This 177-nucleotide RNA was probed chemically with DMS and 2A3. Values are in units of 0.01, from 0 to 300, in steps of 10. For DMS the reverse transcriptase was MarathonRT.
RNA sequence: GGGAACGACUCGAGUAGAGUCGAAAAGAAUGUACUCACAGUGAGUAGACCCAAUGGUACAGUUGAAACAUUCGCAACUCUGGGUACACUUAUGUAUCCGGUUGCUCCGUACGUCUGCUUCGGCUCGGCAGUGUUCUAACUUCGGUUAGAACACUGCAAAAGAAACAACAACAACAAC
Reactivity to DMS in 0.01 (KOAc 150mM, MgCl2 10mM, bicine 150mM(pH8.5), 24C), signal-to-noise 2, nucleotides 027 to 126: g020a040a050u000g010u000a000c020u000c020a130c250a150g020u030g000a050g020u000a050g000a210c000c050c060a080a110u000g020g000u000a050c120a090g000u010u000g000a130a060a050c040a040u010u000c100g010c040a040a020c020u000c120u000g050g000g030u000a000c000a060c300u010u010a070u020g010u000a000u000c000c000g010g010u000u000g000c020u000c090c110g000u020a070c030g010u010c040u000g020c100u000u000c010g020g010c020u000c070g000
Reactivity to 2A3 in 0.01 (KOAc 150mM, MgCl2 10mM, bicine 150mM(pH8.5), 24C), signal-to-noise 2, nucleotides 027 to 126: g050a010a040u170g040u110a040c010u070c020a060c100a160g140u040g140a010g000u080a060g070a130c110c000c000a070a060u160g160g030u150a150c090a110g050u080u060g210a120a000a040c020a070u100u190c090g000c020a020a000c010u060c140u200g000g000g000u040a040c120a030c090u300u180a220u300g010u000a000u010c020c000g020g000u020u010g020c010u000c020c020g020u060a060c020g010u060c040u060g000c000u060u050c020g020g000c010u030c000g120